[RMDB]
RNA sequence: GGGAACGACUCGAGUAGAGUCGAAAAAUAUGUCUGUUAACAGGAAGGCUGGUCCGCCACUUAGUUUUGCCAUUGUCAUUUGGAAUGUUACAGAAUUGCUCCUGUUCUAAGUAUGCUCACAAGCCAGACCUAAGUGGAACUUCGGUUCCACUUAGGUAAAAGAAACAACAACAACAAC
Reactivity to DMS in 0.01 (KOAc 150mM, MgCl2 10mM, bicine 150mM(pH8.5), 24C), signal-to-noise 3, nucleotides 027 to 126: a080u000a060u000g020u000c030u000g010u000u000a040a050c040a050g000g010a120a100g020g020c030u000g010g010u010c040c080g020c030c100a050c080u000u000a070g010u000u000u000u000g030c030c020a050u000u000g000u010c070a070u000u000u000g020g020a130a050u000g000u000u000a030c030a030g000a070a040u010u000g010c080u010c010c010u010g010u010u010c040u010a040a080g010u000a040u010g000c000u010c070a050c120a060a100g010c060c110a130g000
Reactivity to 2A3 in 0.01 (KOAc 150mM, MgCl2 10mM, bicine 150mM(pH8.5), 24C), signal-to-noise 2, nucleotides 027 to 126: a000u180a090u090g090u020c090u060g100u170u120a100a000c020a040g040g120a140a040g020g020c030u060g030g030u030c010c060g050c000c090a030c020u040u070a010g080u070u060u120u070g000c000c000a010u010u160g070u090c070a070u060u070u080g030g070a190a060u050g020u000u080a020c000a030g090a090a110u040u050g030c010u020c000c000u000g020u050u010c010u010a030a050g080u030a030u100g040c040u030c020a060c000a080a000g020c000c010a030g030